[RMDB]
RNA sequence: GGGAACGACUCGAGUAGAGUCGAAAAGAUAUGGAUCGUGUGUUCGCUAUGAAGUACGUCGGAAACGACGUAUGGAGCGGGACACCGAUCCUAAGUCAAAACCCCUUUCACUUCGGUGAAAGGGGAACUAUGUGUAUUGGUUCGCCAAUACACAUAGAAAAGAAACAACAACAACAAC
Reactivity to DMS in 0.01 (KOAc 150mM, MgCl2 10mM, bicine 150mM(pH8.5), 24C), signal-to-noise 9, nucleotides 027 to 126: g010a030u000a270u000g010g000a010u000c000g010u010g020u000g010u000u000c020g040c040u000a300u010g010a180a250g000u000a000c000g010u000c000g010g000a070a060a130c000g010a020c000g010u000a000u000g000g000a040g020c040g040g010g010a010c000a000c010c020g010a000u000c000c000u000a000a060g000u010c020a120a080a130a160c000c000c000c000u000u000u000c000a010c000u000u010c230g020g010u000g000a000a010a000g010g010g010g000a000a020
Reactivity to 2A3 in 0.01 (KOAc 150mM, MgCl2 10mM, bicine 150mM(pH8.5), 24C), signal-to-noise 9, nucleotides 027 to 126: g020a010u040a020u110g010g000a000u010c020g010u030g000u000g040u300u040c040g000c110u160a300u300g010a020a010g010u000a000c000g000u000c000g000g010a030a040a030c000g000a000c000g010u000a000u010g000g000a010g030c170g020g020g000a000c000a000c010c000g000a000u000c000c000u000a010a000g010u000c020a010a040a220a300c000c000c000c000u000u000u000c010a010c010u040u130c300g180g000u000g000a000a000a000g000g000g000g000a000a000
The record gives the reactivity of an RNA of 177 nucleotides to DMS and 2A3. It was measured as part of the RMDB library TTRDES. The reactions ran in a buffer of 150 mM KOAc, 10 mM MgCl2 and 150 mM bicine (pH 8.5), at 24 C.